[RMDB]
RNA sequence: GGGAACGACUCGAGUAGAGUCGAAAAGAUAUGGACUAGUACCUAUUGUCAGAGAAACUUUCGGAAACGAAAGUCUCUUGGAUUUAUAGGGACCGUCCUAAGUCAAACUACUUCUUCGGAAGUAGAAGAGUGUUUACUGGUUCGCCAGUAAACACUCAAAAGAAACAACAACAACAAC
Reactivity to DMS in 0.01 (KOAc 150mM, MgCl2 10mM, bicine 150mM(pH8.5), 24C), signal-to-noise 1, nucleotides 027 to 126: g000a010u000a300u040g000g020a000c000u000a070g010u000a090c000c000u000a000u000u010g010u010c000a220g010a010g000a010a010a000c010u000u000u060c000g000g000a060a100a250c000g020a010a000a010g010u000c020u000c000u000u020g000g020a020u000u010u020a010u030a010g000g000g010a130c300c140g010u030c000c000u010a000a090g010u000c060a140a140a240c000u000a000c030u000u020c010u000u000c230g020g020a000a020g010u000a000g000a110a100
Reactivity to 2A3 in 0.01 (KOAc 150mM, MgCl2 10mM, bicine 150mM(pH8.5), 24C), signal-to-noise 1, nucleotides 027 to 126: g000a000u100a050u180g010g000a000c030u030a040g010u030a030c000c000u010a010u040u010g050u030c040a020g020a020g020a090a120a060c030u020u040u050c020g020g090a120a100a080c040g000a000a020a010g080u050c000u010c000u000u080g040g020a040u290u300u190a020u030a000g000g030g000a000c000c000g010u000c000c010u040a100a020g150u070c050a030a210a040c010u000a000c000u000u020c000u060u060c230g070g000a010a000g000u030a020g020a050a050
Structure probing data (DMS and 2A3) for a 177-nucleotide construct. It was measured as part of the RMDB library TTRDEL. For DMS, 606 sequencing reads were counted. Values cover nucleotides 27 to 126.